[RMDB]
RNA sequence: GGGAACGACUCGAGUAGAGUCGAAAAAGACGUUACACUUUGAAUUGCUUGUUCAACAGCUUGCUUAUCUUUAUUCGUACCAUGAUCUUUAUUUAAGUAAGAUUCAGCUUGUGUGAUGGCAUUAUCACAGUUUUGGGAUUUUCGAAUCCCAAAACUGAAAAGAAACAACAACAACAAC
Reactivity to DMS in 0.01 (KOAc 150mM, MgCl2 10mM, bicine 150mM(pH8.5), 24C), signal-to-noise 1, nucleotides 027 to 126: a090g010a090c130g030u000u000a030c040a000c030u000u010u000g000a110a050u000u000g010c080u000u000g000u000u000c050a070a070c110a090g000c040u000u000g000c050u000u000a020u000c050u010u030u000a090u030u000c060g000u000a070c110c080a090u000g000a030u000c050u000u000u000a030u030u000u000a000a070g000u000a010a080g000a070u000u000c090a070g000c140u010u000g030u000g050u010g000a020u000g000g000c130a130u000u000a090u000c080a050
Reactivity to 2A3 in 0.01 (KOAc 150mM, MgCl2 10mM, bicine 150mM(pH8.5), 24C), signal-to-noise 1, nucleotides 027 to 126: a020g030a010c090g030u030u040a050c050a000c040u130u040u050g030a030a020u170u020g080c020u030u170g060u090u030c050a110a090c010a100g000c000u000u050g000c010u090u100a030u060c040u070u150u050a150u080u140c020g000u040a080c020c020a120u070g020a070u120c040u090u260u050a230u060u220u060a070a010g030u030a000a000g020a030u060u000c010a000g080c080u130u210g030u000g000u010g010a030u020g000g000c010a070u170u080a090u180c020a000
The record gives the reactivity of an RNA of 177 nucleotides to DMS and 2A3. The data come from the RNA Mapping Database (RMDB), library OK2TRN.